[RMDB]
RNA sequence: GGGAACGACUCGAGUAGAGUCGAAAAGAUAUGGAACGUACACUCGGCUAAUCAGGACGGGAGCUGAUAUUCGGAAACGAAUAUCCAGCAUCGAUCGUCUGAUUAGCCGAGUGUACGUUCCUAAGUCCACUUAAAUUCCCUUCGGGGAAUUUAAGUGAAAAGAAACAACAACAACAAC
Reactivity to DMS in 0.01 (KOAc 150mM, MgCl2 10mM, bicine 150mM(pH8.5), 24C), signal-to-noise 1, nucleotides 027 to 126: g000a050u000a300u010g010g000a000a010c010g020u000a030c000a020c010u000c010g010g000c000u000a000a000u000c020a060g030g010a040c000g000g000g000a050g040c020u000g020a040u000a010u000u000c000g040g020a140a100a260c010g000a040a020u000a000u000c140c100a000g010c010a230u020c120g000a110u010c000g000u020c010u000g020a020u000u000a010g030c000c000g030a000g010u000g000u000a000c040g010u010u000c000c000u000a010a080g010u000c030

The record gives the reactivity of an RNA of 177 nucleotides to DMS. Reactivities are given for positions 27 through 126. It was measured as part of the RMDB library TTRINS. The RNA was probed in 150 mM KOAc, 10 mM MgCl2 and 150 mM bicine (pH 8.5) at 24 C.